Overview: The data come from the RNA Mapping Database (RMDB), library TTRDEL. An RNA of 177 nucleotides, treated with 2A3 and DMS and read out base by base. The reactions ran in a buffer of 150 mM KOAc, 10 mM MgCl2 and 150 mM bicine (pH 8.5), at 24 C. Values are in units of 0.01, from 0 to 300, in steps of 10.
RNA sequence: GGGAACGACUCGAGUAGAGUCGAAAAGAUAUGGACGAAAUUCUUGGACCUACAGGGUCGGAAACGACCCGUAGCUAGAAUAGUCCUAAGUCAAAUCGAUAGAAGCGGUUCGCCGCUUCUAUCGAAACUACUUUUAAAUCUUCGGAUUUAAAAGUAGAAAAGAAACAACAACAACAAC
Reactivity to 2A3 in 0.01 (KOAc 150mM, MgCl2 10mM, bicine 150mM(pH8.5), 24C), signal-to-noise 1, nucleotides 027 to 126: g000a010u050a020u090g000g000a000c040g040a200a250a300u050u040c030u110u220g190g090a300c040c000u030a070c250a300g020g010g010u020c040g000g040a060a000a010c000g000a000c000c000c000g000u000a000g000c040u050a020g000a020a050u040a030g000u000c000c010u020a090a010g030u010c030a040a030a230u080c010g000a040u010a030g030a000a000g000c000g040g070u070u240c300g040c070c000g020c000u000u040c000u000a000u000c010g010a010a000a000
Reactivity to DMS in 0.01 (KOAc 150mM, MgCl2 10mM, bicine 150mM(pH8.5), 24C), signal-to-noise 2, nucleotides 027 to 126: g000a030u010a180u000g000g010a000c010g000a110a210a150u000u010c010u000u020g040g000a160c300c000u000a010c010a070g000g000g010u000c010g010g000a050a110a090c000g000a010c000c000c000g000u010a010g010c060u000a010g010a030a010u000a300g010u000c000c000u010a020a110g000u000c040a090a140a150u000c000g010a020u000a000g000a020a010g040c030g020g010u000u020c230g030c000c000g000c000u000u000c000u000a000u020c000g010a000a030a090